[RMDB]
Conditions: 150 mM KOAc, 10 mM MgCl2 and 150 mM bicine (pH 8.5), 24 C. This 177-nucleotide RNA was probed chemically with DMS and 2A3. 2A3 adducts were read by reverse transcription with SuperScript II with manganese. For DMS the reverse transcriptase was MarathonRT.
RNA sequence: GGGAACGACUCGAGUAGAGUCGAAAACUUCUACGCUUCGGCGUAGAAGAAAGGUGUUAGUCGCUCCACCAAAAUCGAAGCGAUAAAAAGUACGAAAGUACAAAACGCGAAUCUUCGGAUUCGCGAAUCGCAAUAAAAAGUUCGCUUUUUAUUGCGAAAAAGAAACAACAACAACAAC
Reactivity to DMS in 0.01 (KOAc 150mM, MgCl2 10mM, bicine 150mM(pH8.5), 24C), signal-to-noise 4, nucleotides 027 to 126: c010u000u000c000u000a010c000g010c000u000u020c200g020g010c010g020u000a000g000a000a000g000a050a050a070g010g010u010g000u010u000a100g020u000c000g010c000u010c010c000a020c000c000a140a110a020a020u020c140g010a050a040g040c000g010a010u010a030a060a070a110a080g020u010a000c010g000a130a060a160g000u000a000c010a100a040a100a180c000g000c000g010a020a010u000c000u000u000c160g010g000a010u000u000c000g010c000g000a010a030
Reactivity to 2A3 in 0.01 (KOAc 150mM, MgCl2 10mM, bicine 150mM(pH8.5), 24C), signal-to-noise 5, nucleotides 027 to 126: c000u000u000c000u010a000c000g000c010u030u070c250g150g010c000g000u010a000g000a000a000g000a010a010a000g010g000u010g010u050u110a070g000u010c010g010c010u000c010c000a010c010c020a180a090a020a050u190c080g090a120a000g000c000g000a000u010a000a100a010a010a000g000u010a000c020g040a140a050a020g000u010a010c040a010a130a020a010c010g000c000g000a000a000u000c010u030u120c230g090g000a000u010u000c000g000c000g000a000a020